[RMDB]
RNA sequence: GGGAACGACUCGAGUAGAGUCGAAAAGAAUAUAAGAGCGCAGUAAUUGUGAGAGCAAACUGCGCCCGGACUGUAGGAUCCGGUGGCACAGCAACGCUCACUCACAACACGCUGUGCCACUUGAAGACACUGCCUGGCCUUUCGAGGCCAGGCAGUGAAAAGAAACAACAACAACAAC
Reactivity to 2A3 in 0.01 (KOAc 150mM, MgCl2 10mM, bicine 150mM(pH8.5), 24C), signal-to-noise 1, nucleotides 027 to 126: g030a010a050u170a020u040a130a010g040a070g000c000g000c000a010g020u160a220a220u090u060g000u050g000a140g000a000g000c080a090a030a000c000u000g000c000g000c000c000c000g000g000a000c040u110g120u180a070g010g100a140u050c000c040g050g010u030g000g010c000a000c000a000g000c000a010a140c010g000c040u010c070a090c070u180c000a080c000a120a000c070a000c070g000c000u000g000u000g000c050c000a000c000u070u160g000a030a000g010a020